[RMDB]
Chemical mapping of a 177-nucleotide RNA with DMS and 2A3. It was measured as part of the RMDB library OK2TST. The reactions ran in a buffer of 150 mM KOAc, 10 mM MgCl2 and 150 mM bicine (pH 8.5), at 24 C.

RNA sequence: GGGAACGACUCGAGUAGAGUCGAAAAGAUGCCGGGCUCUGCACUGGCAGAUAUCGAGCACCUUGAAGCGUUAGAUGAGCACAAUAAACUGGGCAUGCUGUUCUACCGUUUACAGGAGACAGCCAAACAUGCUCCGCUCAUUCGUGAGCGGAGCAUGAAAAGAAACAACAACAACAAC
Reactivity to DMS in 0.01 (KOAc 150mM, MgCl2 10mM, bicine 150mM(pH8.5), 24C), signal-to-noise 1, nucleotides 027 to 126: g030a110u000g020c000c010g000g020g000c100u000c080u000g020c000a070c290u000g000g020c010a000g010a060u010a040u000c080g000a110g020c040a050c050c040u010u000g020a030a080g000c070g000u000u000a090g010a020u000g000a060g020c030a060c100a060a070u010a020a100a160c210u000g000g000g020c070a070u020g000c000u000g000u000u000c010u000a080c000c000g010u030u000u000a130c230a070g000g000a050g000a060c060a020g020c150c150a050a100a240
Reactivity to 2A3 in 0.01 (KOAc 150mM, MgCl2 10mM, bicine 150mM(pH8.5), 24C), signal-to-noise 1, nucleotides 027 to 126: g140a050u040g070c020c020g050g000g030c050u030c070u220g050c070a070c180u090g090g020c030a010g010a010u070a010u010c010g010a000g030c050a010c080c010u060u080g070a080a000g020c050g030u050u160a000g010a070u050g070a000g000c000a000c040a110a190u110a160a160a050c110u100g000g060g000c010a040u060g000c000u040g080u100u030c010u150a300c020c030g110u160u150u110a070c050a060g020g020a000g010a000c020a000g010c000c010a000a010a050

For DMS, 844 sequencing reads were counted.